[RMDB]
RNA sequence: GGGAACGACUCGAGUAGAGUCGAAAAGUACGAUUUUUCGAAAUCGUACGAAGGUCAGGUGGCAGCACCACGACACUGGUCGCGGCGACGGAGCCGAACAGAAUAUGUGUAAUUUCGAUUACACAAACAGAUUUACGAGAUUCGUCUCGUAAAUCUGAAAAGAAACAACAACAACAAC
Reactivity to DMS in 0.01 (KOAc 150mM, MgCl2 10mM, bicine 150mM(pH8.5), 24C), signal-to-noise 4, nucleotides 027 to 126: g010u000a010c000g000a010u000u010u000u000u030c170g030a010a010a000u000c000g010u000a000c000g000a090a070g000g020u000c040a110g020g020u000g000g020c090a110g000c040a140c020c010a040c060g030a040c070a150c130u000g010g010u000c070g010c020g000g020c010g000a080c080g010g000a180g010c000c000g000a060a090c190a080g010a110a080u000a080u000g020u000g020u000a000a000u010u000u010c180g020a030u010u000a000c000a000c000a030a080a250
Reactivity to 2A3 in 0.01 (KOAc 150mM, MgCl2 10mM, bicine 150mM(pH8.5), 24C), signal-to-noise 4, nucleotides 027 to 126: g010u000a000c000g000a000u040u010u020u020u110c140g070a010a000a010u000c000g000u000a010c000g010a080a020g070g020u040c040a010g040g070u010g050g030c050a030g040c030a040c030c020a020c060g030a010c020a040c060u080g110g010u060c070g000c000g060g000c020g000a060c120g100g100a040g000c010c040g010a020a000c010a020g190a140a040u190a110u150g010u000g010u010a020a020u030u100u110c160g030a020u000u030a000c000a000c000a000a060a000
Annotation
Chemical mapping of a 177-nucleotide RNA with DMS and 2A3. It was measured as part of the RMDB library M2PK50. The reactions ran in a buffer of 150 mM KOAc, 10 mM MgCl2 and 150 mM bicine (pH 8.5), at 24 C.